[RMDB]
RNA sequence: GGGAACGACUCGAGUAGAGUCGAAAACUCCCGUUGUUGAGUAUCUGUCUAAAGAAGACCUACAUACAUUGUAUGUAGACCCUAAGUAUCAAGUCAUUGUCUUAAAAGACAAUGUACUUUCUUCUAUCAACGAAUCCCUUCGGGGAUUCGAAAAGAAACAACAACAACAAC
Reactivity to 2A3 in 0.01 (KOAc 150mM, MgCl2 10mM, bicine 150mM(pH8.5), 24C), signal-to-noise 1, nucleotides 027 to 129: c000u000c000c000c000g000u010u010g000u000u010g000a000g000u300a160u090c060u000g080u290c060u300a300a000a000g000a080a000g000a030c000c080u010a030c000a000u090a050c000a000u210u300g000u010a000u000g000u000a000g000a080c080c000c000u160a160a060g140u190a090u250c160a000a000g000u000c000a000u000u000g060u000c000u000u090a090a090a090a000g000a000c000a000a000u000g000u000a000c000u000u150u000c150u140u000c080u080a040u150c000a000a000

An RNA of 170 nucleotides, treated with 2A3 and read out base by base. Source: RMDB library 15KLIB, as collected in RNAgym. 2A3 adducts were read by reverse transcription with SuperScript II with manganese. Reactivities are rounded to 0.1 and cut off at 0 and 3. For 2A3, 653 sequencing reads were counted.